[RMDB]
RNA sequence: GGGAACGACUCGAGUAGAGUCGAAAAACACGAAAUCCAAAAGAAAACAGAGUCGCGCAUAUAACUGGCUCGACUGAUGCGCGACAAAUCGAGCCAUGUAAAGACAGCGGGAAAACCGCUGUCGAAACGUCAACUAGCUCUUCGGAGCUGGUUGACGAAAAGAAACAACAACAACAAC
Reactivity to 2A3 in 0.01 (KOAc 150mM, MgCl2 10mM, bicine 150mM(pH8.5), 24C), signal-to-noise 5, nucleotides 027 to 126: a000c150a010c090g110a110a070a030u100c050c030a080a030a090a040g220a020a090a020a040c070a040g090a010g040u010c000g010c010g010c120a010u210a010u060a220a130c070u100g000g010c000u010c020g070a070c100u120g000a010u020g010c000g010c000g040a000c020a000a010a020u100c010g010a000g000c010c000a040u130g090u150a030a080a010g000a000c000a000g000c000g040g000g030a030a190a050a070c000c000g000c000u010g000u000c000g000a000a000a000
Reactivity to DMS in 0.01 (KOAc 150mM, MgCl2 10mM, bicine 150mM(pH8.5), 24C), signal-to-noise 3, nucleotides 027 to 126: a140c120a130c180g010a100a100a040u010c060c070a100a010a080a150g020a070a060a120a070c150a090g030a210g000u000c010g000c030g000c000a020u010a090u030a050a100c140u000g020g010c000u000c030g000a060c230u010g040a040u000g000c000g060c050g010a000c010a010a090a060u000c090g000a030g010c000c060a180u020g030u020a020a080a100g000a020c000a020g020c000g000g000g010a110a030a210a120c000c000g000c000u000g000u000c000g000a040a020a060